[RMDB]
RNA sequence: GGGAACGACUCGAGUAGAGUCGAAAAUUAAUUGGCUAUAUUGUUUUCACUCCUAAACAACACUUACUAAAAACUGCUUAUUGAUGGUAACUAUUAGGAGCAACUGACUGAACUGUCUCUGUGACAUGUUUCCUUACGUCUAUUUGUCACUCAUGGACGAUAAAUUAGGAUUCGUCCUAAUUUAUCGAAAAGAAACAACAACAACAAC
Reactivity to 2A3 in 0.01 (KOAc 150mM, MgCl2 10mM, bicine 150mM(pH8.5), 24C), signal-to-noise 9, nucleotides 027 to 156: u120u090a010a090u080u050g040g000c030u030a030u030a080u260u140g060u060u040u090u130c050a030c020u010c000c010u050a070a070a040c050a040a050c050a040c070u110u120a040c050u150a050a050a100a130a070c050u090g070c080u180u140a110u190u170g070a080u120g030g030u030a040a020c030u020a080u130u020a020g000g010a000g010c020a050a050c040u100g050a020c010u040g040a060a030c020u030g020u020c010u010c050u150g090u060g040a010c010a040u080g030u020u040u030c020c000u070u100a060c060g040u010c030u030a110u070u050u070g030u010c020a010c040u050c040a090u120g050g030a010
Reactivity to DMS in 0.01 (KOAc 150mM, MgCl2 10mM, bicine 150mM(pH8.5), 24C), signal-to-noise 3, nucleotides 027 to 156: u000u000a100a140u000u000g010g020c050u010a200u000a070u010u010g020u000u000u000u000c070a100c030u000c020c010u000a020a050a160c060a060a100c060a070c050u000u000a190c040u010a040a080a100a080a070c070u020g000c090u000u000a300u010u010g020a190u000g010g030u000a030a070c050u010a150u010u010a070g000g010a050g030c030a040a070c070u000g020a100c050u000g010a040a100c110u010g000u000c020u000c050u000g020u000g010a020c020a050u000g020u000u000u000c010c060u000u010a110c090g020u000c030u010a100u000u000u010g020u000c000a020c050u000c060a090u000g000g030a270
Annotation
An RNA of 207 nucleotides, treated with 2A3 and DMS and read out base by base. For DMS the reverse transcriptase was MarathonRT. The RNA was probed in 150 mM KOAc, 10 mM MgCl2 and 150 mM bicine (pH 8.5) at 24 C.